[RMDB]
RNA sequence: GGGAACGACUCGAGUAGAGUCGAAAAUUGUGUUCGCACAAACUAUCUCCUAAGUCGCUCCGAAGGGCACCCGUGGAGGGAGCGUAUCGGAAACGAUACGCAUCGAUCUCCGGUGCUGUUGACGGAGCGAUAUGGAACCGCGCGACUUCGGUCGCAAUAUGAGUUCCUAGUUCGCUAGGAACUCAUAAAAAGAAACAACAACAACAAC
Reactivity to 2A3 in 0.01 (KOAc 150mM, MgCl2 10mM, bicine 150mM(pH8.5), 24C), signal-to-noise 2, nucleotides 027 to 156: u080u010g010u020g040u120u130c200g030c080a000c020a070a060a050c100u120a160u180c050u000c000c000u050a160a030g000u000c000g000c020u000c010c010g080a090a100g020g000g040c010a030c040c120c080g300u230g000g020a010g010g040g000a010g000c010g000u000a020u000c010g020g080a070a070a050c000g000a000u000a000c000g010c020a170u230c040g070a110u020c000u000c000c000g000g000u000g010c030u000g040u060u110g070a070c020g000g000a000g000c000g000a000u010a000u020g000g020a030a030c010c080g070c040g010c000g160a010c000u070u060c220g120g000u020c010g000c000a030a000